RNA sequence: GGGAACGACUCGAGUAGAGUCGAAAAUCCAUAUUUCCCCGUUCUGGGGAAGCCUCAUGGGUAAAUUAGAAGGACAACCUUUGUUUUAAAGGUAUACCUUCGCUUUUUAGAACAGCGAGGAUCUUAUCUGUGCUUUUCGAUUCGUCGAAAAGCACAGAAAAGAAACAACAACAACAAC
Reactivity to 2A3 in 0.01 (KOAc 150mM, MgCl2 10mM, bicine 150mM(pH8.5), 24C), signal-to-noise 1, nucleotides 027 to 126: u000c000c000a000u010a050u020u000u000c000c000c020c030g200u300u130c070u300g000g000g000g040a000a000g000c000c000u020c030a000u020g000g000g110u010a000a100a000u030u000a000g000a000a000g000g040a040c040a040a120c000c000u000u040u060g280u090u250u020u200a050a010a000g080g000u090a090u080a020c000c000u010u020c030g000c000u150u070u000u000u020a070g080a000a000c000a000g030c000g100a000g040g030a000u000c020u000u020a070u000
Overview:
An RNA of 177 nucleotides, treated with 2A3 and read out base by base. The data come from the RNA Mapping Database (RMDB), library RFM100. The reactions ran in a buffer of 150 mM KOAc, 10 mM MgCl2 and 150 mM bicine (pH 8.5), at 24 C.